[RMDB]
RNA sequence: GGGAACGACUCGAGUAGAGUCGAAAAGAUAUGGAGUAAUCAUAGGACAUGGAGGAUGGGUCGGAAACGACCCUGACUCCAACAGCCUAUGAGUUACUCCUAAGUCAAAUCGGCGUUCGCGCCGAAACAAGGCAAGACUGUUCGCAGUCUUGCCUUGAAAAGAAACAACAACAACAAC
Reactivity to DMS in 0.01 (KOAc 150mM, MgCl2 10mM, bicine 150mM(pH8.5), 24C), signal-to-noise 1, nucleotides 027 to 126: g000a130u000a300u000g010g010a050g010u000a010a040u000c010a040u000a000g000g000a060c040a160u030g000g010a030g000g000a240u000g070g000g030u000c000g000g000a170a060a210c010g000a010c000c000c000u000g000a300c000u000c000c000a030a010c300a150g030c000c000u000a000u000g000a030g010u010u000a000c000u000c000c000u000a050a080g040u000c050a110a130a050u000c000g010g040c000g000u000u000c280g010c090g110c000c010g000a030a050a180
Description
Chemical mapping of a 177-nucleotide RNA with DMS. The DMS profile rests on 598 reads. Values cover nucleotides 27 to 126. The RNA was probed in 150 mM KOAc, 10 mM MgCl2 and 150 mM bicine (pH 8.5) at 24 C. It was measured as part of the RMDB library TTRDES.